[RMDB]
RNA sequence: GGGAACGACUCGAGUAGAGUCGAAAACGAUUAGGGAUCCAGGAGAGAUGCGUCUCAGGAUCCGCGUGGAGAUCGAUCCACUACGAUCUGGAUCCAGUUGGCGGUCGUAUCCGCAUGGAUCCGUAGGCCAGAAGAAACACUUCGGUGUUUCUUCUGGAAAAGAAACAACAACAACAAC
Reactivity to 2A3 in 0.01 (KOAc 150mM, MgCl2 10mM, bicine 150mM(pH8.5), 24C), signal-to-noise 1, nucleotides 027 to 126: c030g070a100u150u200a090g130g000g010a010u040c000c000a060g130g020a030g010a000g030a060u240g300c070g090u040c030u000c020a000g050g000a000u000c000c000g010c020g000u020g070g050a060g010a120u150c090g060a070u010c020c000a020c070u050a070c060g090a060u070c030u120g000g000a000u020c000c030a020g170u090u130g120g020c000g000g040u090c120g050u190a090u080c000c000g000c040a050u080g000g010a010u040c000c000g000u000a000g010g040
Reactivity to DMS in 0.01 (KOAc 150mM, MgCl2 10mM, bicine 150mM(pH8.5), 24C), signal-to-noise 2, nucleotides 027 to 126: c030g020a080u000u000a050g030g010g000a020u000c000c010a150g010g010a020g010a140g000a150u020g010c160g000u000c000u000c060a130g000g000a000u000c000c010g010c130g020u000g020g000a050g000a090u020c180g000a150u000c070c060a090c040u000a180c100g010a080u000c090u010g010g000a010u000c000c000a040g000u000u000g040g030c010g010g030u010c290g000u000a100u010c000c020g030c100a110u000g010g000a000u000c000c000g010u010a030g010g010

An RNA of 177 nucleotides, treated with 2A3 and DMS and read out base by base. For DMS the reverse transcriptase was MarathonRT. 2A3 adducts were read by reverse transcription with SuperScript II with manganese. The reactions ran in a buffer of 150 mM KOAc, 10 mM MgCl2 and 150 mM bicine (pH 8.5), at 24 C. For 2A3, 1,193 sequencing reads were counted.